An RNA of 207 nucleotides, treated with DMS and 2A3 and read out base by base. The RNA was probed in 150 mM KOAc, 10 mM MgCl2 and 150 mM bicine (pH 8.5) at 24 C. For 2A3, 897 sequencing reads were counted. 2A3 adducts were read by reverse transcription with SuperScript II with manganese. DMS adducts were read by reverse transcription with MarathonRT.

RNA sequence: GGGAACGACUCGAGUAGAGUCGAAAAUGUAAUUAUAUCACCACACUUAGAAAGAAGAGACAGUAGUAAGUUUUGCUUGUAAGUAAAGCAUUUCCCCAGAUACACUGGUUGUAAAGAAAGAUCAAGACUACAUGUUUCCUUAUGUAGUUUAAUUUGACUCCAUCAAAAUGUUCGCAUUUUGAUGGAGAAAAGAAACAACAACAACAAC
Reactivity to DMS in 0.01 (KOAc 150mM, MgCl2 10mM, bicine 150mM(pH8.5), 24C), signal-to-noise 2, nucleotides 027 to 156: u000g030u010a050a090u000u010a130u010a100u010c050a160c020c020a070c070a090c090u000u020a080g010a120a090a080g010a110a150g010a110g000a100c040a050g010u010a080g010u010a050a140g010u000u010u000u000g030c010u000u000g020u000a070a140g070u010a020a010a030g040c000a090u000u000u000c000c000c000c010a130g040a150u010a120c040a050c010u010g000g020u000u010g010u000a070a110a120g020a120a090a140g020a090u000c050a070a190g030a050c010u000a010c000a000u000g000u000u010u000c150c150u000u010a020u000g030u000a010g030u000u000u000a020a100u010u000u010g010a180
Reactivity to 2A3 in 0.01 (KOAc 150mM, MgCl2 10mM, bicine 150mM(pH8.5), 24C), signal-to-noise 2, nucleotides 027 to 156: u090g010u030a010a050u200u130a240u070a060u230c030a040c080c030a020c010a020c010u120u050a090g020a070a150a000g020a080a010g040a030g000a030c030a010g060u140a010g010u060a040a070g000u030u010u160u130g000c000u070u040g080u230a030a180g020u050a030a160a000g000c030a020u010u020u060c030c030c000c000a010g060a030u090a010c080a010c060u050g020g000u010u000g010u050a040a160a030g020a050a100a020g050a050u160c080a010a060g070a010c020u080a020c000a020u030g050u060u130u090c040c030u060u100a010u030g010u010a020g000u000u050u110a070a080u060u020u030g020a020

The DMS profile rests on 2,443 reads.